[RMDB]
RNA sequence: GGGAACGACUCGAGUAGAGUCGAAAAAGACCACAUCUGAUGCCCAGUGUUCAGUUAUGAGCACCAGACUUCAAGGGAGAUGUUAACAAAAGUAUAUCCAGAGAAGAGUGAGAAGACUGAAGAAUCCCAGGAGAAAUUUGUCUACUGUCAGUGAGUACACGUGGAGUACUUUCGAGUACUCCACGUGAAAAGAAACAACAACAACAAC
Reactivity to DMS in 0.01 (KOAc 150mM, MgCl2 10mM, bicine 150mM(pH8.5), 24C), signal-to-noise 1, nucleotides 027 to 156: a080g010a160c020c000a250c140a160u010c070u180g020a050u000g000c000c000c000a070g000u000g040u000u000c030a060g000u000u010a090u020g030a000g050c020a000c050c010a020g000a020c010u010u000c030a100a110g030g020g000a170g060a080u000g030u000u010a150a250c150a100a020a110a100g060u000a060u000a160u010c010c000a110g010a160g030a070a050g000a150g000u000g000a140g000a030a120g030a080c020u050g000a070a160g000a080a060u000c060c050c000a070g010g000a100g010a010a100a150u000u000u000g010u000c080u000a080c140u000g000u000c040a090g000u000g020a140g030u030a170
Reactivity to 2A3 in 0.01 (KOAc 150mM, MgCl2 10mM, bicine 150mM(pH8.5), 24C), signal-to-noise 2, nucleotides 027 to 156: a060g050a060c020c000a000c030a040u040c020u110g040a080u130g050c010c010c010a010g000u010g030u030u000c040a060g010u180u250a170u250g000a000g000c000a000c000c010a040g040a070c050u060u040c090a060a060g030g040g000a040g030a010u060g030u100u110a130a090c060a050a140a000a000g040u030a050u030a020u130c040c030a010g000a000g000a110a030g020a040g010u080g010a040g020a010a040g020a010c020u040g010a040a020g010a110a050u010c010c050c020a030g040g010a090g090a030a020a050u110u140u080g020u060c020u050a000c040u060g040u100c020a040g060u020g090a070g070u110a040

The data come from the RNA Mapping Database (RMDB), library OK3TST. An RNA of 207 nucleotides, treated with DMS and 2A3 and read out base by base. 2A3 adducts were read by reverse transcription with SuperScript II with manganese. The reactions ran in a buffer of 150 mM KOAc, 10 mM MgCl2 and 150 mM bicine (pH 8.5), at 24 C. The 2A3 profile rests on 692 reads.